RNA sequence: GGGAACGACUCGAGUAGAGUCGAAAACCGCAGGCUGGGACACACGCAUCACCAAAGCUGACCUCGAGAAUGAAGCGAAGGUUCUUGAACUGCUGGAUGGAGAACAUCGACGUUUAGCGCGGUCCAUCCUACUAAUGCUCUUCGGAGCAUUAGUAGGAAAAGAAACAACAACAACAAC
Reactivity to 2A3 in 0.01 (KOAc 150mM, MgCl2 10mM, bicine 150mM(pH8.5), 24C), signal-to-noise 6, nucleotides 027 to 126: c010c000g020c050a020g030g000c010u040g020g060g040a010c010a000c010a010c100g040c020a030u040c010a010c020c020a100a050a040g040c030u040g060a070c000c040u040c020g030a070g030a100a130u240g030a150a030g060c050g050a090a070g090g000u020u020c000u020u070g090a150a090c030u050g010c020u040g080g010a050u040g030g030a100g020a080a030c020a070u050c020g060a060c050g030u030u080u120a060g030c040g000c000g040g010u000c020c010a030u010
Reactivity to DMS in 0.01 (KOAc 150mM, MgCl2 10mM, bicine 150mM(pH8.5), 24C), signal-to-noise 4, nucleotides 027 to 126: c070c020g010c130a090g000g030c030u000g010g000g000a060c060a100c050a080c080g010c050a020u010c090a130c080c070a110a090a030g010c000u000g010a050c060c040u000c000g020a130g000a100a060u040g010a130a100g000c070g010a120a110g000g000u000u000c020u000u000g000a060a060c030u010g010c020u000g000g000a030u020g010g010a120g000a050a100c060a140u010c080g010a180c150g000u020u040u010a100g000c060g010c030g030g000u000c040c060a060u020